[RMDB]
RNA sequence: GGGAACGACUCGAGUAGAGUCGAAAAAGCGGAUCCGGCCCACAAGUGGAGGCUUCGAACUCCCACCUGGCCGUCCUCCGGACGGCGGGUCACCGGUCAGGCGGUUCCGUCCCACGGCGGUGACCAGCGGUGUACUAUCAUUCGUGAUAGUACACCGAAAAGAAACAACAACAACAAC
Reactivity to 2A3 in 0.01 (KOAc 150mM, MgCl2 10mM, bicine 150mM(pH8.5), 24C), signal-to-noise 9, nucleotides 027 to 126: a000g030c010g010g010a010u010c010c020g240g100c160c050c000a080c040a040a050g030u180g220g010a000g010g000c040u140u100c180g060a090a030c010u010c000c010c000a010c010c010u050g210g000c000c010g010u020c000c010u230c070c120g030g000a010c000g000g000c000g000g000g000u000c020a020c030c040g060g060u070c040a030g030g010c010g010g000u040u000c020c010g030u080c020c000c000a020c030g050g010c020g010g080u050g020a080c010c010a010g050
Reactivity to DMS in 0.01 (KOAc 150mM, MgCl2 10mM, bicine 150mM(pH8.5), 24C), signal-to-noise 4, nucleotides 027 to 126: a120g010c010g000g010a020u000c000c000g000g020c010c020c240a120c170a050a010g050u040g010g000a040g000g020c040u040u040c190g000a080a050c020u000c030c000c010a040c040c000u000g010g020c000c010g020u010c040c030u080c200c250g030g060a040c030g020g020c020g010g000g000u000c100a060c130c060g000g000u020c130a160g000g000c010g010g010u010u020c030c010g000u000c000c000c010a160c160g000g010c070g020g020u010g000a090c020c050a150g000